The record gives the reactivity of an RNA of 207 nucleotides to DMS and 2A3. For DMS the reverse transcriptase was MarathonRT. It was measured as part of the RMDB library ARCHII. DMS (dimethyl sulfate) methylates the pairing face of unpaired adenines and cytosines. The reactions ran in a buffer of 150 mM KOAc, 10 mM MgCl2 and 150 mM bicine (pH 8.5), at 24 C. For 2A3 the reverse transcriptase was SuperScript II with manganese. For DMS, 5,870 sequencing reads were counted.

RNA sequence: GGGAACGACUCGAGUAGAGUCGAAAAGAAAACGUGGUGUGUGUCGUCGUUCUUGUACUCGAGGACCCCACACUCCUUUUCGAAAGGGCGGGUCUCGAGGCACACACUGCAAUACUCUAUACCACACACUGACCAAAACAUGGGUUAUCCGCAGCCACACUGAGAAUAAGUUCGCUUAUUCUCAGUGAAAAGAAACAACAACAACAAC
Reactivity to DMS in 0.01 (KOAc 150mM, MgCl2 10mM, bicine 150mM(pH8.5), 24C), signal-to-noise 2, nucleotides 027 to 156: g010a100a040a070a090c100g000u010g050g000u000g040u010g030u000g020u000c060g000u020c060g000u000u000c070u010u010g020u010a070c090u000c000g020a100g060g010a020c020c000c000c040a110c120a050c050u000c010c010u000u000u000u000c150g010a070a050a050g000g020g000c210g010g020g020u000c000u000c020g010a030g020g000c020a040c050a040c040a100c040u010g000c040a120a100u000a080c060u000c040u000a090u010a160c010c010a130c040a080c020a100c020u000g020a140c020c020a030a080a090a130c080a090u010g000g000g010u000u000a090u000c050c040g000c050a080g000c030c030a220
Reactivity to 2A3 in 0.01 (KOAc 150mM, MgCl2 10mM, bicine 150mM(pH8.5), 24C), signal-to-noise 9, nucleotides 027 to 156: g040a010a070a010a020c060g010u020g010g010u000g000u010g010u000g020u040c070g040u000c030g030u090u050c060u120u190g150u150a090c000u010c020g020a050g050g140a140c010c010c050c010a060c020a040c060u130c000c010u050u030u070u240c230g130a100a010a000g020g020g010c050g010g000g000u000c000u010c010g010a010g000g000c000a000c000a000c000a000c010u010g000c000a000a020u060a090c020u010c010u050a040u060a170c040c030a020c010a020c000a020c100u080g070a060c030c040a030a070a070a080c060a120u140g050g000g020u040u050a070u070c040c050g030c060a010g020c020c010a020